[RMDB]
RNA sequence: GGGAACGACUCGAGUAGAGUCGAAAACUCACUCUUCAUCUUGUCACUGUUGAGUGUGGUUGGUGCUGUGAGCCAUUGGUGCCCCGACACAGAGCAGGUUACCAACUGUUGCGUCGGAGAUGAAAUACACUACGUAAAUGUUCGCAUUUACGUAGUGAAAAGAAACAACAACAACAAC
Reactivity to DMS in 0.01 (KOAc 150mM, MgCl2 10mM, bicine 150mM(pH8.5), 24C), signal-to-noise 9, nucleotides 027 to 126: c040u000c010a080c060u000c040u000u000c020a040u000c050u010u010g010u000c110a100c210u010g000u010u000g010a050g020u000g020u000g010g010u000u000g010g010u000g010c030u000g020u010g000a090g000c040c060a170u000u000g010g020u000g010c030c030c010c010g000a040c030a040c070a090g010a130g020c030a030g000g000u000u020a190c180c170a090a110c030u000g000u000u000g010c050g000u000c020g000g000a070g010a060u010g010a050a070a090u010a170
Reactivity to 2A3 in 0.01 (KOAc 150mM, MgCl2 10mM, bicine 150mM(pH8.5), 24C), signal-to-noise 7, nucleotides 027 to 126: c000u000c010a020c010u030c020u020u010c010a050u020c020u070u130g060u070c030a020c070u030g050u100u070g080a070g040u080g010u040g060g010u030u050g010g020u040g020c040u060g030u060g080a040g040c030c040a090u050u170g080g020u100g030c020c000c000c010g020a000c010a010c010a040g180a030g040c010a000g020g100u130u140a080c030c010a060a040c030u030g090u150u060g020c030g020u020c010g020g000a050g000a050u090g020a050a030a020u150a030

Annotation:
Chemical mapping of a 177-nucleotide RNA with DMS and 2A3. For 2A3 the reverse transcriptase was SuperScript II with manganese. The reactions ran in a buffer of 150 mM KOAc, 10 mM MgCl2 and 150 mM bicine (pH 8.5), at 24 C.